[RMDB]
RNA sequence: GGGAACGACUCGAGUAGAGUCGAAAAUCACUUAACAUAAUGACCUCCAGUUCAACUCGUAUUGGAAUAUAUAUACCAUUUUUUUCUUUAUCCGUUUAUCCACAGAUUCUUAGGUUGAUUUCUUAUCUUGGUUAUUGUGAAUAGUGCUGCAGUAAAACCAUUACGCUACCUUCGGGUAGCGUAAUGGAAAAGAAACAACAACAACAAC
Reactivity to 2A3 in 0.01 (KOAc 150mM, MgCl2 10mM, bicine 150mM(pH8.5), 24C), signal-to-noise 2, nucleotides 027 to 156: u040c000a000c040u170u070a240a010c010a050u150a110a050u080g030a020c010c010u070c110c080a100g020u070u030c030a050a030c060u050c110g050u130a110u070u070g010g020a060a010u060a000u000a010u040a010u080a170c010c040a090u030u040u050u030u060u100u100c040u080u170u170a180u050c040c010g090u130u120u020a040u080c020c010a060c010a050g070a110u110u000c020u130u240a040g050g030u030u000g000a150u040u200u030c040u060u140a130u120c040u000u050g040g000u060u000a030u000u030g040u010g010a040a050u040a050g010u040g000c000u040g000c010a040g060u160a030a130a000a000
This 207-nucleotide RNA was probed chemically with 2A3. The 2A3 profile rests on 573 reads. As a SHAPE reagent, 2A3 marks flexible, mostly unpaired nucleotides at the ribose 2'-OH. Conditions: 150 mM KOAc, 10 mM MgCl2 and 150 mM bicine (pH 8.5), 24 C.